[RMDB]
RNA sequence: GGGAACGACUCGAGUAGAGUCGAAAAGCAGGGUCCGCGUUCCAUUCUUUCUUACCUUGUGGCCGGCAUGGUCCCAGCCUCCUCGCUGGCGCCGGCUGGGCAACAUUCCGAGGGGACCGUCCCCUCGCAAAUUAUCUCUGUUCGCAGAGAUAAUUUGAAAAGAAACAACAACAACAAC
Reactivity to DMS in 0.01 (KOAc 150mM, MgCl2 10mM, bicine 150mM(pH8.5), 24C), signal-to-noise 4, nucleotides 027 to 126: g020c050a080g010g010g010u000c020c040g000c060g000u000u000c010c020a100u010u000c040u000u000u010c070u000u000a120c070c050u000u000g020u000g010g020c020c000g000g000c010a080u000g020g000u010c300c000c000a040g000c020c070u020c130c080u000c150g020c020u010g010g020c250g010c010c000g020g020c010u010g000g010g000c030a050a040c040a090u010u000c150c030g010a040g000g000g010g020a180c170c220g000u000c000c000c000c020u000c010g010
Reactivity to 2A3 in 0.01 (KOAc 150mM, MgCl2 10mM, bicine 150mM(pH8.5), 24C), signal-to-noise 2, nucleotides 027 to 126: g020c030a010g010g060g030u050c030c020g010c010g030u050u050c030c020a050u060u030c010u030u120u000c010u070u080a100c010c010u060u040g020u040g070g010c000c020g000g020c040a120u120g020g010u070c000c000c000a010g000c000c010u100c030c010u070c070g020c030u040g000g010c030g010c010c010g030g000c000u000g000g010g010c000a050a040c020a090u100u110c060c000g000a010g010g000g010g010a010c030c020g110u120c000c000c000c010u000c010g020